The record gives the reactivity of an RNA of 177 nucleotides to 2A3 and DMS.
The reactions ran in a buffer of 150 mM KOAc, 10 mM MgCl2 and 150 mM bicine (pH 8.5), at 24 C.
High DMS reactivity at an A or C suggests that its Watson-Crick edge is free.
The 2A3 profile rests on 13,909 reads.

RNA sequence: GGGAACGACUCGAGUAGAGUCGAAAACUUGCCGGACUAGCUGAGAGGAGGUGCAUGGCCGUCGUCAGUUCGUACCGUGAGGCGUCCUGUUAAGUCAGGCAACGAGCGAGACCCAUUUCCACUGUUGCAUAUUGAUGAAGUUCGCUUCAUCAAUAUGAAAAGAAACAACAACAACAAC
Reactivity to 2A3 in 0.01 (KOAc 150mM, MgCl2 10mM, bicine 150mM(pH8.5), 24C), signal-to-noise 8, nucleotides 027 to 126: c010u010u040g010c020c010g020g020a040c020u040a030g030c020u030g050a040g010a050g180g050a040g030g010u060g020c090a100u120g110g000c000c020g070u050c010g050u020c010a040g010u060u060c030g030u050a210c020c020g030u060g040a040g030g040c030g070u080c000c000u030g040u040u100a160a190g220u040c020a000g000g000c000a010a020c020g020a010g020c020g010a010g020a080c020c010c020a050u050u060u040c060c030a110c070u100g060u180u100g030
Reactivity to DMS in 0.01 (KOAc 150mM, MgCl2 10mM, bicine 150mM(pH8.5), 24C), signal-to-noise 9, nucleotides 027 to 126: c070u000u000g010c020c020g010g010a080c030u000a060g010c050u000g000a090g010a100g010g000a060g010g020u000g010c100a060u010g010g010c200c040g010u000c040g010u010c070a060g010u000u010c070g010u000a110c030c030g010u010g010a130g010g010c060g000u000c000c000u010g000u010u000a080a080g010u000c020a030g000g010c070a050a030c040g000a080g000c030g010a090g010a160c020c020c020a220u000u000u000c040c050a140c210u010g010u000u000g010